Source: RMDB library RNAMAK, as collected in RNAgym. Chemical mapping of a 207-nucleotide RNA with 2A3 and DMS. For 2A3, 1,865 sequencing reads were counted. The reactions ran in a buffer of 150 mM KOAc, 10 mM MgCl2 and 150 mM bicine (pH 8.5), at 24 C.
[RMDB]
RNA sequence: GGGAACGACUCGAGUAGAGUCGAAAACUGAUAUUCGUAUCAGGUCGGACCUUUGUGUAGAGUGGUAAUGGCAAGGAAGGAGAGGCCCAUUGGGCCUCGAAUUCUGAUGACCCAUUACAUGCUCUACACUCUGGUGGCAGUAGUCAUUCGUGACUAAUGUAUACGGUCCUUUCGAGGACCGUAUACAAAAAGAAACAACAACAACAAC
Reactivity to 2A3 in 0.01 (KOAc 150mM, MgCl2 10mM, bicine 150mM(pH8.5), 24C), signal-to-noise 2, nucleotides 027 to 156: c000u010g010a020u050a040u120u190c300g050u050a010u040c000a010g020g060u080c010g100g140a030c000c010u000u010u020g000u000g000u000a000g010a010g020u020g010g010u070a000a000u010g030g000c080a080a100g020g000a010a010g020g020a040g000a010g010g010c000c000c050a220u240u300g050g000g000c020c000u000c000g000a000a010u010u010c000u000g010a010u090g010a010c030c000c000a000u000u000a000c010a100u010g000c000u000c010u000a000c000a000c000u010c000u000g020g000u020g020g000c040a050g070u110a010g000u030c010a030u090u060c280g090u030g070a000c000u160a040a210
Reactivity to DMS in 0.01 (KOAc 150mM, MgCl2 10mM, bicine 150mM(pH8.5), 24C), signal-to-noise 2, nucleotides 027 to 156: c020u010g000a040u000a070u010u010c280g000u000a060u000c000a000g000g010u000c020g050g010a070c020c010u010u010u000g030u000g020u000a010g020a020g010u000g040g000u000a000a040u020g000g020c000a040a150g000g020a000a020g000g000a300g000a060g030g000c010c000c020a300u000u000g080g020g030c000c010u000c010g000a140a210u000u010c010u000g010a050u000g000a040c300c000c000a040u000u010a020c020a080u000g000c000u000c000u000a020c000a000c000u000c010u000g000g040u000g020g000c060a140g000u000a050g000u000c010a100u000u010c170g000u010g000a100c040u000a040a160